[RMDB]
RNA sequence: GGGAACGACUCGAGUAGAGUCGAAAACUCGCGCGAACAUGGAGGCGUGGAGCGCGACAUGAAUCAGCCUCGAUUAGAUUAAUGGUCGACAGAUCAGCGGCGAUCAGCGACCAAAUUAGAAGCCGCAACCGGAAGAGGAGACGCUCGACGGACGUCAGCGGUAAAUACGAUUCGUCGUAUUUACCGCAAAAGAAACAACAACAACAAC
Reactivity to 2A3 in 0.01 (KOAc 150mM, MgCl2 10mM, bicine 150mM(pH8.5), 24C), signal-to-noise 3, nucleotides 027 to 156: c010u010c000g000c010g010c000g040a300a090c010a010u010g110g010a040g000g000c020g000u010g030g010a050g030c010g010c020g010a040c060a160u300g130a100a130u110c070a050g020c020c000u020c020g020a090u050u100a080g070a090u090u120a100a110u100g000g000u000c010g000a050c030a150g010a000u010c020a020g000c010g010g000c010g010a000u000c000a000g010c000g010a010c000c010a000a030a010u070u020a080g010a080a020g000c000c000g000c010a010a040c040c000g060g020a140a000g030a070g000g090a130g020a070c050g090c050u030c020g070a070c040g000g010a010c020g050u050c070a000
Reactivity to DMS in 0.01 (KOAc 150mM, MgCl2 10mM, bicine 150mM(pH8.5), 24C), signal-to-noise 2, nucleotides 027 to 156: c070u020c030g020c030g050c030g040a120a180c070a110u010g040g010a100g020g000c070g000u000g040g020a290g030c000g000c000g010a040c090a060u000g000a180a130u040c040a130g000c010c000u000c000g010a220u000u010a170g010a180u000u000a090a060u030g010g000u000c000g020a200c120a170g060a070u000c040a200g080c100g000g020c040g000a050u000c020a120g060c090g000a000c000c000a000a050a070u010u010a160g000a060a060g000c010c010g000c010a200a090c040c010g020g040a040a050g000a150g000g020a150g010a070c000g010c010u000c030g000a100c020g030g000a070c010g000u040c030a160

Structure probing data (2A3 and DMS) for a 207-nucleotide construct. 2A3 adducts were read by reverse transcription with SuperScript II with manganese. The 2A3 profile rests on 1,739 reads. Values cover nucleotides 27 to 156.